RNA sequence: GGGAACGACUCGAGUAGAGUCGAAAAAGCUGGUGAUGGUCUUGUACGAAAUUCUCAAUGCUCGUAUCGUGUGACGUAAAACAGCACAACUGCUGUUGUAUUUUCUUGCUAUACAUGACGACAAAACCGUGGUAAUCGAGUUCGCUCGAUUACCACGAAAAGAAACAACAACAACAAC
Reactivity to DMS in 0.01 (KOAc 150mM, MgCl2 10mM, bicine 150mM(pH8.5), 24C), signal-to-noise 1, nucleotides 027 to 126: a020g070c010u000g000g000u020g000a050u020g000g010u000c000u000u000g000u000a140c010g000a050a000a130u010u020c070u080c010a160a000u010g000c080u000c040g010u000a080u000c130g020u030g000u000g000a080c200g000u010a070a040a080a000c120a000g000c040a000c220a040a090c210u010g030c000u000g000u000u000g000u000a060u000u000u000u000c120u120u030g000c090u000a020u040a020c120a010u000g000a090c020g000a030c090a010a120a060a060c090
Reactivity to 2A3 in 0.01 (KOAc 150mM, MgCl2 10mM, bicine 150mM(pH8.5), 24C), signal-to-noise 2, nucleotides 027 to 126: a000g020c040u030g010g050u060g070a160u060g030g000u000c000u050u060g040u020a070c070g080a010a060a180u130u050c040u010c000a030a150u120g070c070u000c040g060u050a160u030c020g030u020g030u040g120a060c070g000u010a000a130a000a000c000a000g000c000a010c100a240a000c060u070g000c000u020g040u000u010g060u020a160u020u150u020u080c100u170u000g040c010u040a000u020a170c010a020u180g000a030c120g010a010c050a050a110a000a000c000
Chemical mapping of a 177-nucleotide RNA with DMS and 2A3. DMS adducts were read by reverse transcription with MarathonRT. The 2A3 profile rests on 757 reads. It was measured as part of the RMDB library OK1LIB.